[RMDB]
RNA sequence: GGGAACGACUCGAGUAGAGUCGAAAAGCUUCAGUUGGGGGAGCUUCCCCCGUCCGAUGUGGGGGUCGCACCGCCGGAGCAGCUCUAUCUGAAACACAUAGGUCUGCACCUGUCCGAGCAGGGCUAAAAUAGGCCUGAAGUUCGCUUCAGGCCUAUUAAAAGAAACAACAACAACAAC
Reactivity to DMS in 0.01 (KOAc 150mM, MgCl2 10mM, bicine 150mM(pH8.5), 24C), signal-to-noise 2, nucleotides 027 to 126: g010c000u010u030c060a010g000u060u030g000g020g000g000g010a080g010c070u020u000c020c000c000c070c000g000u030c060c160g060a080u010g060u020g000g000g000g040g020u010c170g010c070a080c010c030g000c000c010g000g010a060g030c010a020g000c020u000c000u000a060u000c050u010g000a130a150a030c140a160c110a000u000a010g000g000u010c000u000g010c040a130c040c130u020g020u020c030c010g030a110g000c020a090g020g000g000c000u000a030a060
Reactivity to 2A3 in 0.01 (KOAc 150mM, MgCl2 10mM, bicine 150mM(pH8.5), 24C), signal-to-noise 2, nucleotides 027 to 126: g000c020u040u030c030a090g010u040u250g010g040g020g000g030a040g020c000u050u060c010c000c000c000c010g080u160c060c050g110a090u130g020u160g040g050g000g020g000u090c050g000c040a120c060c000g020c000c060g000g000a000g000c030a010g010c050u000c000u000a080u050c100u060g130a090a130a010c070a010c000a110u040a110g060g080u040c030u020g000c010a110c040c110u050g020u040c000c040g000a010g020c050a050g000g000g030c010u040a000a200
The record gives the reactivity of an RNA of 177 nucleotides to DMS and 2A3. It was measured as part of the RMDB library OK1LIB. The DMS profile rests on 2,272 reads. The reactions ran in a buffer of 150 mM KOAc, 10 mM MgCl2 and 150 mM bicine (pH 8.5), at 24 C. DMS adducts were read by reverse transcription with MarathonRT.